The record gives the reactivity of an RNA of 177 nucleotides to DMS and 2A3.
RNA sequence: GGGAACGACUCGAGUAGAGUCGAAAAAGUAGGCGCUUGGAAGAACUCCCGCCCAUGUUUCAGGUUUCCGAAUUUUAUAGGCGCGUGCUGCCGUGAGCCUACAAGGGGUAGCCCUCAGCGGUGAGGGGCAAGAGAAUCACUUCGGUGAUUCUCUUGCAAAAGAAACAACAACAACAAC
Reactivity to DMS in 0.01 (KOAc 150mM, MgCl2 10mM, bicine 150mM(pH8.5), 24C), signal-to-noise 1, nucleotides 027 to 126: a060g010u000a010g010g010c060g030c040u000u000g010g020a060a010g020a070a180c060u000c070c120c060g010c020c000c030a050u010g020u000u000u000c020a170g000g000u000u000u030c020c000g030a020a070u040u010u020u050a140u010a100g030g000c020g050c130g010u010g060c020u020g020c020c010g000u000g000a110g000c070c020u000a030c050a120a060g000g000g000g000u030a140g000c010c040c020u000c050a060g020c160g010g060u020g000a110g010g000g010
Reactivity to 2A3 in 0.01 (KOAc 150mM, MgCl2 10mM, bicine 150mM(pH8.5), 24C), signal-to-noise 2, nucleotides 027 to 126: a000g090u080a040g020g010c090g000c070u050u120g050g010a020a020g050a070a080c030u000c020c040c010g030c010c010c000a020u060g060u030u010u000c060a050g040g050u000u070u040c020c010g000a010a030u070u060u090u110a250u100a090g000g000c020g000c010g050u020g020c000u030g030c010c000g010u030g040a020g000c000c000u000a040c050a070a070g060g000g000g010u020a020g010c010c030c000u080c040a080g100c060g180g010u050g010a000g010g020g000
Values cover nucleotides 27 to 126. 2A3 is a SHAPE reagent: it acylates the 2'-hydroxyl of flexible nucleotides of all four kinds. The data come from the RNA Mapping Database (RMDB), library RFM100.